[RMDB]
RNA sequence: GGGAACGACUCGAGUAGAGUCGAAAAUACGCAAGGAAAUUCGGUCGCGACCGUUGACGGAUAAUGGUUGCCGCGCCAUAGAGCAAUAGCGCCUUGCAUGCGCACAAGUUUUCAACGGAUAACGCCAGCUAAUCCGAUCAUUCGUGAUCGGAUUAGCAAAAGAAACAACAACAACAAC
Reactivity to 2A3 in 0.01 (KOAc 150mM, MgCl2 10mM, bicine 150mM(pH8.5), 24C), signal-to-noise 1, nucleotides 027 to 126: u220a060c060g000c000a020a020g070g030a040a020a170u090u130c130g060g070u210c040g020c020g030a060c000c000g020u040u020g040a070c060g100g000a010u060a040a140u170g100g000u080u060g040c040c000g030c000g000c000c000a040u060a040g110a020g000c030a040a060u050a240g040c010g000c000c000u040u070g040c060a060u040g000c040g000c000a030c000a090a060g000u030u060u040u000c000a040a020c040g000g000a040u080a050a030c040g010c010c000a010
Reactivity to DMS in 0.01 (KOAc 150mM, MgCl2 10mM, bicine 150mM(pH8.5), 24C), signal-to-noise 1, nucleotides 027 to 126: u000a080c180g030c030a060a040g000g000a100a070a120u020u020c220g010g030u010c030g020c000g010a170c050c010g000u030u000g010a100c230g010g000a150u000a100a030u000g010g000u000u000g000c090c030g010c070g000c020c000a130u000a140g000a090g020c130a130a010u000a110g010c120g010c000c020u010u010g000c060a070u000g020c060g030c060a080c060a040a130g000u000u010u000u000c030a060a090c020g000g020a090u010a080a110c040g000c010c080a160